[RMDB]
RNA sequence: GGGAACGACUCGAGUAGAGUCGAAAAGAUAUGGAUUCCCAAGGACGAUAAGCAACACUCGGAAACGAGUGAAUUGCUUUUGACGUCCGACGGAAUCCUAAGUCAAAGUCACUCUUCGGAGUGACAACUAAUGCCGUGUCUUCGGACACGGCAUUAGAAAAGAAACAACAACAACAAC
Reactivity to DMS in 0.01 (KOAc 150mM, MgCl2 10mM, bicine 150mM(pH8.5), 24C), signal-to-noise 2, nucleotides 027 to 126: g010a020u010a300u000g000g020a000u020u000c000c000c000a040a300g000g010a020c000g010a200u000a010a030g030c020a000a020c000a020c000u000c050g010g000a150a150a140c000g030a030g030u000g000a050a100u000u000g010c000u000u000u000u010g000a140c110g000u000c000c000g000a300c300g000g010a000a000u000c000c000u000a050a070g000u030c120a030a100a130g000u010c000a000c000u000c000u020u050c240g010g000a030g000u000g000a000c010a000a090